[RMDB]
RNA sequence: GGGAACGACUCGAGUAGAGUCGAAAAGUUAUCAUCUUCAUAGGAUUAACAACGAUGUAUGGUGCAGCCUGAAGUUUCAUAUCAUAACUGAUGCCGUUCAUAGGUCUAGCCACAGAAACCAACGUAGGUCUAAAUCCAACUAUAGACAAAAUAGAAGCUAUGUUUACCCUUUCGAGGGUAAACAUAGAAAAGAAACAACAACAACAAC
Reactivity to DMS in 0.01 (KOAc 150mM, MgCl2 10mM, bicine 150mM(pH8.5), 24C), signal-to-noise 3, nucleotides 027 to 156: g020u000u000a080u000c040a070u010c030u000u010c120a170u000a110g030g000a160u000u020a110a070c040a070a130c050g010a090u020g020u010a050u000g030g010u000g010c010a090g010c040c020u020g030a080a130g020u010u010u000c060a110u000a090u000c060a040u000a060a080c050u010g000a140u000g030c010c040g000u020u000c060a110u000a060g040g020u000c050u000a150g000c000c020a090c080a100g010a090a070a100c030c010a030a090c090g010u000a050g020g020u010c040u000a020a080a120u010c050c040a050a070c080u000a100u000a060g010a080c020a040a030a060a090u000a080g000a110a100g020
Reactivity to 2A3 in 0.01 (KOAc 150mM, MgCl2 10mM, bicine 150mM(pH8.5), 24C), signal-to-noise 4, nucleotides 027 to 156: g010u020u070a050u090c040a020u010c010u130u020c030a090u100a140g030g010a050u080u080a070a050c080a040a000c040g040a040u070g030u110a090u080g030g030u080g020c060a020g020c030c000u030g030a040a020g020u000u070u070c060a030u070a060u120c030a030u060a200a040c030u020g020a050u060g030c030c030g040u050u030c040a040u070a100g000g050u000c030u040a010g020c010c010a040c020a040g060a080a060a020c040c020a050a020c070g070u060a080g020g000u010c010u050a040a070a040u030c030c020a010a030c020u050a020u060a160g050a060c030a030a120a050a010u090a060g050a080a000g020

The record gives the reactivity of an RNA of 207 nucleotides to DMS and 2A3. The RNA was probed in 150 mM KOAc, 10 mM MgCl2 and 150 mM bicine (pH 8.5) at 24 C. For DMS, 4,803 sequencing reads were counted.